[RMDB]
RNA sequence: GGGAACGACUCGAGUAGAGUCGAAAAUAGACCGAAGCUGACUUGGAAUGUCUCGCUUUAAAGAUUUUCCUUCCUAACAGGGCUCCAAGUAAAGCGCCCAGUAAAAUGUUGGCUACAAACCAGAGGACGCUACUCGGUGAUUCGUCACCGAGUAGCGAAAAGAAACAACAACAACAAC
Reactivity to 2A3 in 0.01 (KOAc 150mM, MgCl2 10mM, bicine 150mM(pH8.5), 24C), signal-to-noise 1, nucleotides 027 to 126: u050a040g070a020c000c160g020a160a010g000c040u020g000a000c000u000u180g100g040a060a050u170g060u000c000u210c090g080c060u000u080u180a160a050a000g050a000u000u000u000u170c000c000u000u080c000c000u010a090a010c040a190g000g000g000c000u000c020c100a050a000g050u000a040a300a000g000c000g000c050c000c000a080g050u120a000a080a070a070u050g000u170u000g000g020c000u070a060c060a000a080a170c000c150a040g040a100g150g020a000